[RMDB]
RNA sequence: GGGAACGACUCGAGUAGAGUCGAAAAAUAGGCUUAUCAAGAGAGGUGGAGGGACUGGCCCGAUGAAACCCCGCAGCCAGAAAUGGUGCCAAUUCCUGCAGCGGAAACGUUGAAAGAUGAGCCGAUGCGCGCCCUAGGUUCGCCUAGGGCAAAAGAAACAACAACAACAAC
Reactivity to 2A3 in 0.01 (KOAc 150mM, MgCl2 10mM, bicine 150mM(pH8.5), 24C), signal-to-noise 7, nucleotides 027 to 129: a000u150a020g000g000c000u020u010a020u040c060a110a000g160a000g020a050g120g030u060g040g040a050g010g000g030a020c010u020g030g010c010c010c000g080a140u080g030a010a020a020c000c000c000c000g030c040a030g070c010c010a010g030a020a030a020u090g010g000u040g010c010c000a030a040u030u020c000c010u030g050c010a000g010c010g010g010a050a040a020c020g020u030u050g060a120a090a020g010a020u020g000a000g000c030c010g000a040u120g050c080g010c000
Reactivity to DMS in 0.01 (KOAc 150mM, MgCl2 10mM, bicine 150mM(pH8.5), 24C), signal-to-noise 3, nucleotides 027 to 129: a140u000a070g000g050c030u030u010a000u010c040a100a080g000a110g030a060g030g010u040g000g000a050g050g000g040a080c040u000g030g000c040c000c050g010a060u020g000a080a040a100c000c000c000c000g040c060a100g000c030c030a050g030a070a060a070u030g000g000u030g030c060c060a000a060u060u000c000c000u000g050c000a000g020c030g040g010a060a050a060c110g040u000u040g020a100a070a100g000a020u000g010a040g000c010c010g070a080u020g020c090g040c190
An RNA of 170 nucleotides, treated with 2A3 and DMS and read out base by base.
2A3 adducts were read by reverse transcription with SuperScript II with manganese.
Reactivities are given for positions 27 through 129.
High 2A3 reactivity points to a flexible backbone, as in loops and unpaired stretches.
DMS adducts were read by reverse transcription with MarathonRT.
High DMS reactivity at an A or C suggests that its Watson-Crick edge is free.
The RNA was probed in 150 mM KOAc, 10 mM MgCl2 and 150 mM bicine (pH 8.5) at 24 C.